[RMDB]
RNA sequence: GGGAACGACUCGAGUAGAGUCGAAAAGAAAAAUCAGGCUGUUCUUUGGUGGGGAAGGGCAUUAACAUCCAUCAAGUUCAUAAAAAUUCUCUGCGUUAUGCCCAGUUUGAGAAUGCAUGAUAAUACAUAUGUUUUCAGACCUUUUUUAAGCAGCAAAAUAAUUUUAUGCAUUCGUGCAUAAAAUUAUAAAAGAAACAACAACAACAAC
Reactivity to DMS in 0.01 (KOAc 150mM, MgCl2 10mM, bicine 150mM(pH8.5), 24C), signal-to-noise 2, nucleotides 027 to 156: g030a020a080a110a100a120u000c020a070g050g030c000u010g000u000u000c040u010u000u000g020g040u000g000g010g010g010a080a080g000g010g020c010a020u000u000a050a070c040a120u000c010c030a030u000c030a040a120g010u010u000c060a180u010a060a090a090a070a110u000u000c030u000c000u000g030c040g020u000u000a020u000g000c010c010c040a130g010u000u010u010g000a010g010a010a020u010g000c040a020u000g000a060u000a130a160u000a230c000a020u010a040u000g010u000u000u010u010c010a050g000a020c010c020u010u010u010u030u000u010a060a110g020c030a040g030c060a070a080a090
Reactivity to 2A3 in 0.01 (KOAc 150mM, MgCl2 10mM, bicine 150mM(pH8.5), 24C), signal-to-noise 2, nucleotides 027 to 156: g000a000a090a010a000a010u150c050a010g080g020c020u030g020u120u070c050u120u050u050g000g000u010g010g030g000g030a060a070g020g010g000c010a000u050u050a030a020c010a050u030c030c000a010u020c010a040a040g020u110u050c040a050u200a160a170a040a010a030u120u010c040u010c010u050g020c010g030u050u020a010u020g000c000c000c000a000g000u010u060u010g010a020g000a030a010u010g000c040a010u020g050a040u100a150a030u090a250c010a010u040a020u070g010u000u020u010u010c010a010g000a050c000c000u020u230u070u000u050u070a080a030g000c010a000g000c000a000a050a160